[RMDB]
RNA sequence: GGGAACGACUCGAGUAGAGUCGAAAAGAGCGAAAGCGAAAAGUAGAGUUGGGAAGUAGGAGCUACUGGAACUCUUAUUCCACCGAACAGUAGCAAGGUGGCCCGUUUCUACGAAGAAAGAAAGAAACCGAUUACAUAAGUUCGCUUAUGUAAUCGGAAAAGAAACAACAACAACAAC
Reactivity to DMS in 0.01 (KOAc 150mM, MgCl2 10mM, bicine 150mM(pH8.5), 24C), signal-to-noise 6, nucleotides 027 to 126: g030a150g000c020g010a100a070a130g000c040g000a090a080a110a150g000u010a010g000a040g010u000u030g010g020g010a090a100g010u010a060g020g010a150g020c040u010a030c090u020g000g030a080a120c050u000c070u010u020a090u010u030c020c000a040c030c040g000a120a120c030a090g010u030a050g010c040a070a210g000g010u010g000g020c020c000c010g000u010u010u000c000u000a030c050g010a090a110g000a100a060a070g010a070a070a050g000a090a100a080
Reactivity to 2A3 in 0.01 (KOAc 150mM, MgCl2 10mM, bicine 150mM(pH8.5), 24C), signal-to-noise 5, nucleotides 027 to 126: g110a000g010c060g050a100a010a010g050c050g050a100a040a060a010g020u040a000g000a020g010u110u130g010g020g020a070a110g040u080a050g020g060a020g010c020u060a050c060u090g030g060a040a050c000u010c000u040u040a060u170u030c010c020a030c020c000g010a080a050c010a050g090u170a020g050c110a080a030g040g010u010g030g000c000c000c000g010u040u100u000c000u000a000c060g010a030a030g100a030a070a000g140a050a070a000g060a050a020a020